[RMDB]
Source: RMDB library OK2TRN, as collected in RNAgym.
Structure probing data (DMS and 2A3) for a 177-nucleotide construct.
The DMS profile rests on 12,531 reads.
For DMS the reverse transcriptase was MarathonRT.
The reactions ran in a buffer of 150 mM KOAc, 10 mM MgCl2 and 150 mM bicine (pH 8.5), at 24 C.
As a SHAPE reagent, 2A3 marks flexible, mostly unpaired nucleotides at the ribose 2'-OH.
RNA sequence: GGGAACGACUCGAGUAGAGUCGAAAAGAAUUUGCGGACUAUUAUGUAGACACUCAUGCUGCCCACAAGAAGUUGCUUGAUCCAGCAAACUACUCCGUGAUUGAGAGCAAUCUAGUCUUUGUAGGGGCAUACAUGAUCUCUUCGGAGAUCAUGUAUGAAAAGAAACAACAACAACAAC
Reactivity to DMS in 0.01 (KOAc 150mM, MgCl2 10mM, bicine 150mM(pH8.5), 24C), signal-to-noise 8, nucleotides 027 to 126: g010a090a090u000u010u010g030c030g000g010a090c080u000a060u000u010a070u010g000u000a050g000a090c110a050c080u000c070a060u000g010c080u000g010c010c010c010a100c100a060a040g000a070a070g010u000u000g010c010u000u000g000a110u010c070c080a120g000c050a050a040a110c060u000a070c050u000c030c070g020u000g000a050u000u000g010a160g000a070g010c070a030a040u000c060u000a080g010u000c040u000u000u010g020u000a110g000g010g000g010
Reactivity to 2A3 in 0.01 (KOAc 150mM, MgCl2 10mM, bicine 150mM(pH8.5), 24C), signal-to-noise 5, nucleotides 027 to 126: g010a020a120u050u070u140g010c020g020g000a030c040u050a080u300u050a090u260g070u040a030g030a060c030a020c110u050c020a050u110g000c010u080g010c030c030c020a040c000a030a010g090a040a040g030u050u040g030c020u030u030g030a030u080c040c010a010g000c020a020a040a100c020u070a020c030u000c040c040g050u050g020a080u040u120g070a160g000a010g110c010a000a020u020c030u070a040g110u020c010u030u070u150g070u100a080g010g010g000g010